[RMDB]
RNA sequence: GGGAACGACUCGAGUAGAGUCGAAAAGAACGGCAGAGAGCCGAGAAAUGAGACGAGGUAGAGCGCGCGCUCUACCAAAAGUUGUGUGUAAAAACGCACGUGUAGGCGCGGCUACACAUCUCAAGAAACUAGUAAUCCCUUUCGAGGGAUUACUAGUAAAAGAAACAACAACAACAAC
Reactivity to DMS in 0.01 (KOAc 150mM, MgCl2 10mM, bicine 150mM(pH8.5), 24C), signal-to-noise 5, nucleotides 027 to 126: g010a140a080c020g000g000c010a150g020a140g000a260g010c010c000g020a090g000a100a130a100u010g000a010g000a030c090g020a170g000g010u000a030g030a120g020c110g010c150g010c060g000c010u070c010u000a010c010c060a000a030a090a080g000u040u010g010u000g000u000g000u020a070a070a130a100a070c000g000c010a020c020g010u050g020u000a030g000g010c000g000c010g000g000c060u000a020c000a020c030a080u000c000u000c010a040a080g000a090a070
Reactivity to 2A3 in 0.01 (KOAc 150mM, MgCl2 10mM, bicine 150mM(pH8.5), 24C), signal-to-noise 6, nucleotides 027 to 126: g040a060a020c010g000g000c050a020g110a030g030a030g290c000c020g020a030g040a000a120a050u150g000a010g000a010c090g030a080g130g000u010a020g000a030g090c140g020c010g010c050g010c160u050c000u080a000c000c000a020a020a000a000g110u180u070g000u000g000u000g020u050a020a080a020a030a000c010g010c010a030c040g070u110g020u040a010g010g020c020g000c010g060g020c000u020a000c020a000c000a020u000c010u010c010a020a040g060a080a100